[RMDB]
RNA sequence: GGGAACGACUCGAGUAGAGUCGAAAAGAUAUGGAAAUAACCGAGGAACUACACCGCACGUCGGAAACGACGUGGGUGCCGUUUGACGUUAUUUCCUAAGUCAAACACCACAGUUCGCUGUGGUGAAUCCCUCAUAGAACUUCGGUUCUAUGAGGGAAAAAGAAACAACAACAACAAC
Reactivity to 2A3 in 0.01 (KOAc 150mM, MgCl2 10mM, bicine 150mM(pH8.5), 24C), signal-to-noise 2, nucleotides 027 to 126: g030a040u040a040u160g020g000a000a010a000u010a020a000c030c090g010a050g220g200a040a010c030u070a000c050a020c040c070g280c230a000c000g030u010c010g050g100a090a040a020c020g000a010c010g000u000g000g000g000u000g000c000c000g010u000u050u110g050a000c010g000u000u000a010u000u000u000c000c010u000a070a000g010u010c030a100a030a100c010a000c010c000a000c010a000g010u130u170c230g020c200u000g020u000g030g010u000g000a000a020
Reactivity to DMS in 0.01 (KOAc 150mM, MgCl2 10mM, bicine 150mM(pH8.5), 24C), signal-to-noise 2, nucleotides 027 to 126: g010a030u000a300u000g000g010a000a000a000u000a000a010c010c040g000a290g030g010a020a000c010u000a070c000a000c010c000g000c000a030c000g000u000c000g000g000a050a070a110c000g000a000c010g040u000g000g000g000u000g000c020c080g020u020u000u000g000a300c300g000u000u000a010u000u000u000c000c000u000a020a070g010u000c020a100a100a200c000a000c010c000a010c000a010g010u000u010c240g020c000u000g010u000g000g000u000g000a030a150
This 177-nucleotide RNA was probed chemically with 2A3 and DMS. DMS adducts were read by reverse transcription with MarathonRT. For DMS, 1,381 sequencing reads were counted. High 2A3 reactivity points to a flexible backbone, as in loops and unpaired stretches. The reactions ran in a buffer of 150 mM KOAc, 10 mM MgCl2 and 150 mM bicine (pH 8.5), at 24 C.